The data come from the RNA Mapping Database (RMDB), library OK2TST. The record gives the reactivity of an RNA of 177 nucleotides to 2A3 and DMS. For 2A3 the reverse transcriptase was SuperScript II with manganese.
RNA sequence: GGGAACGACUCGAGUAGAGUCGAAAAGCGCCGCCGCCGCUCAUCAAGGGUUAUCUGCGGCUCGGCGCGAAGAUCUGCGGCGCACCCGCGUGGGAUCCCGACUUCAAUUGCGCGGAUUUUCUCACGAGUGGAUAGCUCGAUUCGUCGAGCUAUCCACAAAAGAAACAACAACAACAAC
Reactivity to 2A3 in 0.01 (KOAc 150mM, MgCl2 10mM, bicine 150mM(pH8.5), 24C), signal-to-noise 1, nucleotides 027 to 126: g000c000g000c000c000g000c020c040g040c010c000g060c050u040c030a150u070c050a120a170g160g000g020u120u120a090u070c070u070g000c010g030g050c020u000c000g020g030c000g000c020g010a010a010g050a140u010c030u080g000c000g000g020c040g000c000a030c000c000c000g040c000g000u010g020g000g000a000u050c040c040c000g090a120c040u220u160c150a180a300u160u180g020c090g000c020g070g080a010u170u020u080u020c020u010c010a030c040g030a010
Reactivity to DMS in 0.01 (KOAc 150mM, MgCl2 10mM, bicine 150mM(pH8.5), 24C), signal-to-noise 1, nucleotides 027 to 126: g000c030g060c000c010g000c060c190g010c000c040g010c070u000c050a090u000c170a170a200g010g000g010u020u000a070u010c050u000g000c090g030g040c020u000c030g010g000c010g030c040g010a060a020g000a100u010c090u020g000c040g040g000c000g040c030a140c040c010c010g000c070g020u000g000g010g000a060u000c050c010c000g010a060c040u000u000c190a070a130u000u010g020c020g010c040g000g000a090u000u000u000u000c010u000c020a030c080g000a100